RNA sequence: GGGAACGACUCGAGUAGAGUCGAAAAGAUAUGGAUACUUCAUUUGUCAGCUGGAGUACUCGGAAACGAGUACCCAGCUUGGAUUUAAUGAGAGUAUCCUAAGUCAAAACAUCGCUUCGGCGAUGAAUCUAUCUUGAUGGUUCGCCAUCAAGAUAGAAAAAGAAACAACAACAACAAC
Reactivity to 2A3 in 0.01 (KOAc 150mM, MgCl2 10mM, bicine 150mM(pH8.5), 24C), signal-to-noise 2, nucleotides 027 to 126: g020a050u060a060u230g010g000a000u010a020c000u010u020c000a020u000u000u060g040u030c010a000g010c010u020g010g000a210g110u010a000c010u000c000g010g040a090a110a060c010g000a000g000u010a000c000c000c000a000g040c000u000u010g000g000a000u300u290u180a010a010u010g020a150g030a020g220u000a000u000c000c000u010a090a020g040u030c040a020a030a110a180c000a000u020c010g020c040u090u090c300g220g000c010g010a010u000g000a000a080
Reactivity to DMS in 0.01 (KOAc 150mM, MgCl2 10mM, bicine 150mM(pH8.5), 24C), signal-to-noise 3, nucleotides 027 to 126: g000a060u000a300u010g000g010a000u000a000c000u000u000c000a020u000u000u000g000u010c000a040g000c000u000g010g000a120g010u000a000c000u010c000g010g010a150a100a220c010g010a010g000u000a000c000c000c000a000g010c000u000u000g010g010a020u000u010u000a010a000u000g010a070g010a020g010u000a020u000c000c000u000a030a110g020u020c050a140a100a140a240c020a010u000c000g020c010u000u020c220g040g010c000g010a000u000g000a060a110